[RMDB]
RNA sequence: GGGAACGACUCGAGUAGAGUCGAAAAAUAUGCUGUGGUUGAUUCUGUUGAUUCACACGUUUCGCUUCCAUAUAGUGUGUUAACGGAAACUCCAUGUUAAGGUUUAUUAUAAGAAAAUUUUUUGAAUUAGUAUGAAAUCAUUCGUGAUUUCAUACUAAAAAGAAACAACAACAACAAC
Reactivity to 2A3 in 0.01 (KOAc 150mM, MgCl2 10mM, bicine 150mM(pH8.5), 24C), signal-to-noise 2, nucleotides 027 to 126: a000u210a020u150g090c100u030g000u030g030g000u270u040g010a240u050u000c000u010g000u000u000g000a070u100u230c010a000c000a000c000g070u020u300u270c160g100c070u180u070c110c020a140u140a030u140a240g000u010g000u000g010u000u010a000a000c010g000g020a010a030a030c000u000c040c000a000u040g070u220u040a060a040g000g000u120u030u100a070u040u160a130u040a120a050g030a030a220a090a070u140u060u000u000u010u180g070a090a040u000
Source information: Structure probing data (2A3) for a 177-nucleotide construct. Values cover nucleotides 27 to 126. Reactivities are rounded to 0.1 and cut off at 0 and 3. The RNA was probed in 150 mM KOAc, 10 mM MgCl2 and 150 mM bicine (pH 8.5) at 24 C. For 2A3, 584 sequencing reads were counted.